Description:
An RNA of 207 nucleotides, treated with 2A3 and DMS and read out base by base. 2A3 adducts were read by reverse transcription with SuperScript II with manganese. DMS adducts were read by reverse transcription with MarathonRT. The 2A3 profile rests on 2,315 reads. Conditions: 150 mM KOAc, 10 mM MgCl2 and 150 mM bicine (pH 8.5), 24 C. The DMS profile rests on 7,038 reads.
RNA sequence: GGGAACGACUCGAGUAGAGUCGAAAAGCUCAUGUUGACGGAACGUCCGCACUAAGCUUGCCAUCAAUAUGGGUGCCAUGGAGGAGUCCGUGGCAUUCAGGUUGGCUAAGGAGGGAUGAACCGGGCCAGGGGUGAAAACCAGCAGCCAAGAGUUCCCCAUUAUAAUUUAGUUCGCUAAAUUAUAAUGAAAAGAAACAACAACAACAAC
Reactivity to 2A3 in 0.01 (KOAc 150mM, MgCl2 10mM, bicine 150mM(pH8.5), 24C), signal-to-noise 3, nucleotides 027 to 156: g010c000u040c020a110u160g060u150u110g090a060c000g000g020a050a020c020g020u010c000c010g060c030a040c060u090a030a080g050c020u020u040g010c030c000a070u100c090a080a180u180a140u270g010g010g000u000g000c000c000a000u000g030g000a060g140g040a110g280u010c010c010g010u000g000g000c000a000u000u000c000a000g010g000u010u010g010g000c030u030a030a050g020g020a030g020g030g000a010u010g010a030a030c010c000g000g010g000c020c040a080g040g010g010g010u060g080a050a040a000a090c010c000a010g050c020a000g000c010c030a030a050g010a010g030u040u030c000c000c000
Reactivity to DMS in 0.01 (KOAc 150mM, MgCl2 10mM, bicine 150mM(pH8.5), 24C), signal-to-noise 3, nucleotides 027 to 156: g020c020u000c060a070u010g020u000u000g000a130c020g020g010a080a300c100g020u000c010c010g010c050a220c040u000a070a100g010c030u000u000g000c040c020a090u000c050a080a150u000a120u010g000g020g010u000g000c010c000a020u000g030g010a040g020g030a250g010u000c000c020g050u000g020g000c000a000u000u010c010a020g010g050u000u000g010g010c030u000a090a080g000g010a220g010g010g000a090u000g010a080a260c000c020g000g020g060c030c020a070g020g010g000g010u000g000a070a060a100a070c010c010a050g030c080a070g000c020c010a020a100g000a190g010u010u000c000c010c010